[RMDB]
RNA sequence: GGGAACGACUCGAGUAGAGUCGAAAAGGGGUGCCACUGAAUGCCUUUACUCGUCCUAUUAUUAUAUUCGAGCAAACCGUCGAUCAACACACACGCCGCGUAGUUUGAUGCGUAGGAGAGGCAAAAACUACCAUUAGCAUUUCGAUGCUAAUGGUAGAAAAGAAACAACAACAACAAC
Reactivity to DMS in 0.01 (KOAc 150mM, MgCl2 10mM, bicine 150mM(pH8.5), 24C), signal-to-noise 6, nucleotides 027 to 126: g010g000g010g020u000g010c030c050a070c060u010g000a100a090u010g010c030c000u010u000u000a090c060u000c050g000u000c050c060u000a070u010u010a100u010u000a100u010a150u010u000c040g020a060g020c050a040a090a120c140c040g010u010c040g020a090u010c050a070a030c070a050c100a070c080a110c090g010c080c050g010c060g010u000a070g000u010u000u000g010a070u000g010c080g010u000a060g020g000a110g000a040g020g000c080a030a030a050a080a110
Reactivity to 2A3 in 0.01 (KOAc 150mM, MgCl2 10mM, bicine 150mM(pH8.5), 24C), signal-to-noise 5, nucleotides 027 to 126: g010g000g010g020u040g030c030c000a080c050u060g060a110a050u080g000c000c000u030u040u040a070c020u030c020g090u030c020c000u040a070u180u010a080u150u100a110u050a030u100u080c010g020a020g030c040a040a070a080c030c010g050u040c010g010a070u070c060a090a040c010a000c010a000c000a010c160g040c040c000g010c020g010u030a030g010u030u040u110g050a050u060g000c030g020u020a030g010g040a040g010a010g020g010c020a010a030a020a040a060